[RMDB]
RNA sequence: GGGAACGACUCGAGUAGAGUCGAAAAAGUGAAUCUGGGAAAGAACAACGCAAUGUAGUUUACUCCUGGCACCAUCAUUACCAUUAAGCUGGGAGGUCUGAAGCAGGCAUUAGCAAUGAGGUCGCCAGAUACUCCACCUAUUCGUAGGUGGAGUAUCAAAAGAAACAACAACAACAAC
Reactivity to DMS in 0.01 (KOAc 150mM, MgCl2 10mM, bicine 150mM(pH8.5), 24C), signal-to-noise 9, nucleotides 027 to 126: a080g000u010g000a060a100u020c040u010g000g000g010a030a050a160g000a060a060c080a050a070c290g000c060a060a040u030g010u000a060g020u010u000u000a090c050u000c010c000u000g000g000c020a100c160c090a060u030c110a070u030u020a100c170c090a080u020u030a070a060g010c020u000g000g000g000a020g010g020u010c100u010g000a040a090g020c030a060g010g020c010a020u000u010a090g020c030a050a150u010g010a070g000g000u000c020g010c010c030a090
Reactivity to 2A3 in 0.01 (KOAc 150mM, MgCl2 10mM, bicine 150mM(pH8.5), 24C), signal-to-noise 9, nucleotides 027 to 126: a000g150u120g030a060a070u050c040u050g000g000g040a050a230a060g030a060a050c030a030a010c060g000c050a040a050u100g020u030a050g020u030u040u080a060c010u020c000c000u010g010g000c020a040c090c010a080u150c010a050u070u260a090c060c020a050u170u130a090a030g010c020u010g000g010g000a020g030g030u020c070u100g070a090a030g030c040a030g240g000c010a030u030u070a040g010c020a040a070u080g020a030g050g050u030c020g010c020c000a000
Source information
Chemical mapping of a 177-nucleotide RNA with DMS and 2A3. For 2A3 the reverse transcriptase was SuperScript II with manganese. Source: RMDB library OK1LIB, as collected in RNAgym. For DMS the reverse transcriptase was MarathonRT.